[RMDB]
RNA sequence: GGGAACGACUCGAGUAGAGUCGAAAAGAUAUGGAUGACUCCCCACCAGCCCUAACCGAAGAACUCGGAAACGAGGGAGGUUAGAAGGCUGAGGUCAUCCUAAGUCAAAGCCCCCUUCGGGGGGCAAGGAAUGUAUACUCUUCGGAGUAUACAUUCCAAAAGAAACAACAACAACAAC
Reactivity to 2A3 in 0.01 (KOAc 150mM, MgCl2 10mM, bicine 150mM(pH8.5), 24C), signal-to-noise 1, nucleotides 027 to 126: g010a090u220a130u300g000g030a000u000g020a000c020u150c150c000c020c000a010c000c000a000g010c020c000c000u010a000a010c020c030g160a300a020g020a140a050c000u000c000g020g040a130a000a000c030g000a000g000g000g000a020g010g000u020u010a040g030a250a080g020g000c000u010g010a000g000g010u000c000a000u010c010c000u050a120a000g040u090c090a070a000a220g010c020c050c010c000c000u010u020c130g050g000g000g000g000g030c000a000a000
Reactivity to DMS in 0.01 (KOAc 150mM, MgCl2 10mM, bicine 150mM(pH8.5), 24C), signal-to-noise 2, nucleotides 027 to 126: g000a120u000a130u000g000g000a010u010g000a030c020u000c160c000c000c060a300c180c000a000g010c000c000c000u000a030a000c000c020g000a100a150g050a150a100c000u000c010g000g000a110a030a160c000g000a000g000g010g000a120g000g020u000u000a000g000a080a090g020g010c000u000g010a060g000g000u000c010a000u000c000c000u010a040a030g000u000c070a090a120a160g000c000c000c000c000c000u000u000c110g010g000g030g000g000g000c010a000a020

This 177-nucleotide RNA was probed chemically with 2A3 and DMS. Reactivities are given for positions 27 through 126. The reactions ran in a buffer of 150 mM KOAc, 10 mM MgCl2 and 150 mM bicine (pH 8.5), at 24 C. For 2A3 the reverse transcriptase was SuperScript II with manganese.